[RMDB]
RNA sequence: GGGAACGACUCGAGUAGAGUCGAAAAAACAAGAUGUUGGAACUAUGGGCCGAUCUCAUUAGGCCGGGUUCGGGUUGGCUAUUCACUGGCCUGCCCAUUCCAAGUCGGGAGUUGAGGGUUCGGGCUCGAGCGAAGGCUUGUGGUUCGGGCAUUCUUACACAAAUUCUAUCUUCGGAUAGAAUUUGUGAAAAGAAACAACAACAACAAC
Reactivity to 2A3 in 0.01 (KOAc 150mM, MgCl2 10mM, bicine 150mM(pH8.5), 24C), signal-to-noise 1, nucleotides 027 to 156: a000a000c130a050a090g040a030u090g010u110u060g050g010a010a020c010u020a130u140g010g020g020c040c000g080a120u050c000u000c090a150u110u140a020g040g000c030c070g000g000g000u110u060c050g000g000g000u000u100g010g000c020u020a040u240u270c140a120c300u080g000g010c010c000u010g010c030c000c000a020u050u000c020c000a000a050g210u090c040g050g080g000a100g030u120u080g050a240g030g040g000u020u010c020g080g010g100c080u040c060g000a000g000c010g050a050a020g000g000c000u010u010g020u010g000g010u020u010c060g010g030g070c030a020u090u000c020u020u070a010
Structure probing data (2A3) for a 207-nucleotide construct. The reactions ran in a buffer of 150 mM KOAc, 10 mM MgCl2 and 150 mM bicine (pH 8.5), at 24 C. The 2A3 profile rests on 560 reads. Source: RMDB library ARCHII, as collected in RNAgym.